[RMDB]
The record gives the reactivity of an RNA of 177 nucleotides to DMS and 2A3. It was measured as part of the RMDB libraries RFM100 and RFMREP. The RNA was probed in 150 mM KOAc, 10 mM MgCl2 and 150 mM bicine (pH 8.5) at 24 C.
RNA sequence: GGGAACGACUCGAGUAGAGUCGAAAAACUAGGUUGGGGGGGCUUGUUCCUCCCAGCCGUAGCGAAAGCGUUAAGUGUUCCGCCUGGGGAGUAUGGUCGCAAGGCUGAAACUCAAAGGAAUUGACGGAACACAAGAGGGGUUCGCCCCUCUUGUGUUAAAAGAAACAACAACAACAAC
Reactivity to DMS in 0.01 (KOAc 150mM, MgCl2 10mM, bicine 150mM(pH8.5), 24C), signal-to-noise 4, nucleotides 027 to 126: a150c040u010a040g000g020u000u000g000g000g000g000g000g000g010c050u040u030g020u040u010c000c000u010c010c000c000a000g030c010c000g000u050a040g000c070g000a080a070a110g010c020g020u010u000a050a110g010u010g000u000u000c000c000g010c080c070u020g020g000g020g020a030g010u000a070u070g000g000u000c000g000c280a100a110g010g010c000u000g000a140a160a080c010u000c010a040a110a180g000g000a060a090u010u040g000a130c030g010g000
Reactivity to 2A3 in 0.01 (KOAc 150mM, MgCl2 10mM, bicine 150mM(pH8.5), 24C), signal-to-noise 2, nucleotides 027 to 126: a000c010u010a020g000g020u000u000g020g000g000g040g000g000g000c050u060u260g110u090u070c000c000u000c000c000c000a000g000c000c000g000u010a000g010c090g130a080a030a010g040c010g020u030u060a190a050g070u070g060u100u020c020c010g020c050c030u020g000g010g010g000a000g010u000a050u300g030g000u000c000g020c100a070a110g000g010c000u000g010a060a020a000c000u000c000a030a020a020g020g010a020a030u070u060g040a020c010g010g030